[RMDB]
An RNA of 177 nucleotides, treated with 2A3 and DMS and read out base by base. The 2A3 profile rests on 2,730 reads. Reactivities are given for positions 27 through 126. It was measured as part of the RMDB library OK1LIB. 2A3 adducts were read by reverse transcription with SuperScript II with manganese. For DMS, 1,541 sequencing reads were counted.
RNA sequence: GGGAACGACUCGAGUAGAGUCGAAAAACAAGACAAAUCCAAGUCAAAAACCAACAAACCAAAUAAAUGACUUAACAAAAUGCUCCCCGUCUUUAAAUUUUGGAAAAGGGUCCCAAUAGGGACCCGGCCGUAUAGAUACGUUCGCGUAUCUAUGCGGAAAAGAAACAACAACAACAAC
Reactivity to 2A3 in 0.01 (KOAc 150mM, MgCl2 10mM, bicine 150mM(pH8.5), 24C), signal-to-noise 5, nucleotides 027 to 126: a000c060a040a040g080a020c030a020a110a020u090c080c030a030a040g010u020c020a070a030a060a020a130c070c030a050a080c090a130a140a080c060c040a100a140a060u160a040a120a100u110g030a020c010u100u110a120a020c040a090a210a050a070u090g040c020u010c000c020c000c030g020u020c000u030u130u080a120a300a300u070u110u080u120g030g020a030a050a110a130g030g000g000u000c010c000c010a130a260u190a230g000g010g000a000c000c000c000g000g000
Reactivity to DMS in 0.01 (KOAc 150mM, MgCl2 10mM, bicine 150mM(pH8.5), 24C), signal-to-noise 1, nucleotides 027 to 126: a060c140a050a100g000a100c060a060a100a220u030c130c030a020a070g000u020c000a040a130a080a130a160c110c040a070a070c200a090a160a070c010c010a030a030a020u050a030a030a070u010g010a010c030u020u040a180a050c030a090a080a150a040u020g000c010u000c000c000c010c040g030u000c030u030u060u010a000a110a090u000u000u010u020g000g000a100a050a060a060g020g020g020u000c000c000c020a040a080u050a080g000g000g000a000c000c000c000g000g030